[RMDB]
RNA sequence: GGGAACGACUCGAGUAGAGUCGAAAAAGUCACUAUUAUAAAACUUCGGGUCUUAUUCUCAUAUGCCCCCGCAAGCGAGGGCCUGGUCGAUUAGUGAGACCAGGUGCGACGCGGGGGCUACAGCCCGCAUAAAUUAGGGGUUCGCCCCUAAUUUAUGAAAAGAAACAACAACAACAAC
Reactivity to DMS in 0.01 (KOAc 150mM, MgCl2 10mM, bicine 150mM(pH8.5), 24C), signal-to-noise 1, nucleotides 027 to 126: a070g000u010c070a060c060u000a060u010u010a120u040a220a060a160a070c060u010u010c010g020g030g000u000c100u000u030a140u010u010c050u000c010a130u000a040u000g010c030c010c000c000c000g020c000a130a250g000c000g000a050g040g000g020c000c000u010g000g000u000c010g010a300u000u000a110g040u000g020a290g000a010c000c000a050g020g020u000g020c080g020a190c100g020c000g000g000g000g010g010c010u000a020c060a080g000c000c020c030g000